This 207-nucleotide RNA was probed chemically with DMS and 2A3. It was measured as part of the RMDB library OK3TST. For 2A3 the reverse transcriptase was SuperScript II with manganese. Reactivities are given for positions 27 through 156.

RNA sequence: GGGAACGACUCGAGUAGAGUCGAAAAGUUCGCAGUGCAGUUCUCAAACACAACACUUACCGAGACAAAAACCACUCGUCGGAGCGACAAACACCAACGGGAAAAUGAUGAUGAUGAUUGACGGGGCGAUUUCGUGGUUGCAAGCGACGGGCGCACCACAAUACGGAUGUUUCGACAUCCGUAUUGUAAAAGAAACAACAACAACAAC
Reactivity to DMS in 0.01 (KOAc 150mM, MgCl2 10mM, bicine 150mM(pH8.5), 24C), signal-to-noise 2, nucleotides 027 to 156: g040u000u000c030g030c050a080g010u000g040c040a110g020u000u000c050u020c060a150a070a190c100a120c050a110a060c060a060c040u000u010a140c030c020g000a100g010a240c080a010a040a090a110a090c010c020a060c000u000c010g020u010c060g030g010a080g030c020g000a300c070a050a100a110c040a050c020c030a080a150c060g040g000g000a050a020a060a060u010g010a090u010g020a070u010g000a110u000g010a160u010u000g010a080c040g020g000g050g050c040g010a110u000u000u000c070g000u000g020g030u000u000g000c020a020a140g000c030g020a070c020g020g030g030c040g000c020a040c030c020
Reactivity to 2A3 in 0.01 (KOAc 150mM, MgCl2 10mM, bicine 150mM(pH8.5), 24C), signal-to-noise 4, nucleotides 027 to 156: g070u070u100c030g010c080a030g000u020g030c030a020g040u110u020c040u020c000a090a160a020c090a020c030a080a120c030a030c080u150u110a080c040c070g040a040g030a090c090a020a090a020a010a030c040c020a040c030u040c020g040u020c030g020g030a040g050c020g100a070c070a020a100a020c060a010c060c020a050a030c050g000g000g080a010a050a060a100u150g040a030u010g010a010u040g000a010u040g030a060u000u200g020a030c040g010g000g010g010c020g040a050u080u090u070c060g020u020g010g000u010u060g030c040a100a050g040c020g070a050c010g030g020g010c020g000c000a020c030c000
2A3 is a SHAPE reagent: it acylates the 2'-hydroxyl of flexible nucleotides of all four kinds.